[RMDB]
RNA sequence: GGGAACGACUCGAGUAGAGUCGAAAAGGUGAUCGAGAGAACUCUCGUUAAGGAACUCGGCAAAAUAGCCCCGUAACUUCGGGAGAAGGGGUGCUGGUGUAAAAGCCAGCCGCAGUGAAUAGGCCCACAUUAAAAGCCCAUUCGUGGGCUUUUAAUGAAAAGAAACAACAACAACAAC
Reactivity to DMS in 0.01 (KOAc 150mM, MgCl2 10mM, bicine 150mM(pH8.5), 24C), signal-to-noise 2, nucleotides 027 to 126: g010g030u010g000a030u000c040g020a070g010a140g010a110a130c070u000c020u000c030g020u010u000a070a070g010g040a210a040c030u000c180g000g050c060a050a080a210a100u000a220g010c020c000c000c020g030u010a060a260c030u000u010c120g050g030g010a070g020a080a130g020g000g010g050u000g010c030u000g000g000u010g000u010a100a080a170a240g000c000c000a030g030c010c070g000c090a050g000u000g000a110a150u010a060g010g000c020c030c000a180
Structure probing data (DMS) for a 177-nucleotide construct.
The data come from the RNA Mapping Database (RMDB), library OK2TRN.
The DMS profile rests on 983 reads.